[RMDB]
RNA sequence: GGGAACGACUCGAGUAGAGUCGAAAAGAUAUGGAGUACCACCUUUUGACGGAGUUCGGAAACGAAUACUCCGAUAAGGUGUGUACUCCUAAGUCAAAACGACAAAAUACUUCGGUAUUUUGUCGAACACCACAAUCAACUUCGGUUGAUUGUGGUGAAAAGAAACAACAACAACAAC
Reactivity to 2A3 in 0.01 (KOAc 150mM, MgCl2 10mM, bicine 150mM(pH8.5), 24C), signal-to-noise 2, nucleotides 027 to 126: g020a010u060a080u140g020g010a010g000u020a000c000c010a020c010c000u050u140u120u200g190a180c030g000g000a000g000u000u000c000g010g020a050a060a050c010g030a010a010u090a290c010u000c000c000g020a030u030a050a000g030g010u010g000u040g000u030a010c010u010c000c000u010a020a000g000u010c000a000a010a060a160c020g020a000c000a010a000a010a020u010a000c010u040u070c300g080g000u000a010u000u000u000u000g000u020c000g000a030a000
Reactivity to DMS in 0.01 (KOAc 150mM, MgCl2 10mM, bicine 150mM(pH8.5), 24C), signal-to-noise 2, nucleotides 027 to 126: g000a080u000a300u000g010g000a020g010u000a010c000c000a010c000c000u000u000u000u000g010a180c140g000g000a030g010u000u000c000g020g000a080a110a180c000g000a000a070u000a040c000u000c000c000g000a070u000a010a000g000g020u000g000u010g060u000a000c000u000c000c000u000a000a050g000u000c040a060a110a100a190c000g010a000c000a010a000a010a000u000a000c000u000u030c230g020g030u000a000u000u000u000u000g030u000c000g010a090a090
This 177-nucleotide RNA was probed chemically with 2A3 and DMS. 2A3 adducts were read by reverse transcription with SuperScript II with manganese. For DMS the reverse transcriptase was MarathonRT. The reactions ran in a buffer of 150 mM KOAc, 10 mM MgCl2 and 150 mM bicine (pH 8.5), at 24 C. It was measured as part of the RMDB library TTRDEL.